[RMDB]
RNA sequence: GGGAACGACUCGAGUAGAGUCGAAAAAUGUUGGUGAUAGUGCGGAAGUUGCAGUUAAAAUGUUUAAAAAAAACUUUUAACGUACCAAUGGAAAAACUCAACACACUAGUUGCAACUGCAGAAGCUGAUAUCCACGCGUUCGCGCGUGGAAAAAGAAACAACAACAACAAC
Reactivity to DMS in 0.01 (KOAc 150mM, MgCl2 10mM, bicine 150mM(pH8.5), 24C), signal-to-noise 2, nucleotides 027 to 129: a010u050g020u300u000g080g000u000g000a000u000a010g030u000g060c080g030g000a080a020g100u000u000g000c040a020g020u000u060a000a000a050a000u060g030u000u000u020a000a000a060a000a200a000a000a000c030u010u010u010u010a110a000c100g050u030a010c300c070a040a140u030g000g030a060a040a090a000a000c120u000c050a010a000c030a060c090a010c040u000a150g100u010u000g100c050a070a080c010u050g060c100a100g030a090a000g000c000u040g000a070u100a020

Structure probing data (DMS) for a 170-nucleotide construct. DMS adducts were read by reverse transcription with MarathonRT. It was measured as part of the RMDB library 15KLIB.